[RMDB]
RNA sequence: GGGAACGACUCGAGUAGAGUCGAAAAAUAAACGGUAUGUGAAGAUGCAUACUACGGGAUCGUGUACUUGUACAAAUGAUAAUCUCACAGGAGAUUAUUAAUUAUAAGAAGGAGAAGAGGUUCCCUCCAACACAUUAUCGUUCGCGAUAAUGUGUUGAAAAGAAACAACAACAACAAC
Reactivity to 2A3 in 0.01 (KOAc 150mM, MgCl2 10mM, bicine 150mM(pH8.5), 24C), signal-to-noise 9, nucleotides 027 to 126: a010u160a010a070a010c070g010g010u010a000u010g050u030g170a260a110g130a190u300g040c010a010u010a010c010u040a090c070g020g020g030a060u060c030g030u060g030u140a060c010u030u010g040u070a010c040a060a070a040u070g010a000u000a000a000u010c010u010c010a130c100a140g300g090a000g010a000u000u000a000u000u020a070a020u020u040a040u000a030a050g060a060a030g070g040a090g030a110a050g030a030g040g030u010u020c000c000c010u010c010
Reactivity to DMS in 0.01 (KOAc 150mM, MgCl2 10mM, bicine 150mM(pH8.5), 24C), signal-to-noise 7, nucleotides 027 to 126: a080u030a060a070a090c110g010g010u000a010u000g030u010g020a120a120g020a140u030g000c010a010u000a020c000u000a110c120g000g010g010a070u020c040g000u020g010u010a110c020u000u010g010u010a030c160a020a030a030u010g000a000u000a000a010u000c000u000c000a260c280a190g010g000a010g000a010u000u000a000u000u000a010a020u010u010a040u010a100a070g000a080a050g000g000a110g010a090a080g000a090g000g000u000u010c000c000c020u010c120